An RNA of 207 nucleotides, treated with 2A3 and read out base by base.
[RMDB]
RNA sequence: GGGAACGACUCGAGUAGAGUCGAAAAGGAUAUAGUGAUGACGGAUGGGAAAGCAUGCGCCACGUGACGUACGGAAACCAUCCUGCUUAUGUCGGAUGCAGGAUGGGAAAGCAUGCGAGUAGUACGUACGGAAACCAUCCUCUCGGAGCCAUUGGAGUCAUCCUUGUGCUUUCGAGCACAAGGAUGAAAAAGAAACAACAACAACAAC
Reactivity to 2A3 in 0.01 (KOAc 150mM, MgCl2 10mM, bicine 150mM(pH8.5), 24C), signal-to-noise 1, nucleotides 027 to 156: g070g020a030u090a040u230a140g010u010g210a060u090g000a030c080g000g010a020u040g000g000g000a070a070a000g040c010a000u020g000c000g000c110c030a110c050g150u190g110a040c000g010u040a000c010g030g000a050a040a000c000c000a000u020c000c010u000g000c010u120u090a080u300g090u110c050g090g000a000u060g020c000a000g060g000a000u000g000g000g000a000a000a060g000c010a000u000g030c060g000a040g010u140a000g000u000a000c010g000u000a000c110g000g020a040a000a000c000c000a010u000c000c000u010c040u010c020g040g000a000g000c000c000a010u090u130g100g010a110g000
The data come from the RNA Mapping Database (RMDB), library OK3TST. Values cover nucleotides 27 to 156.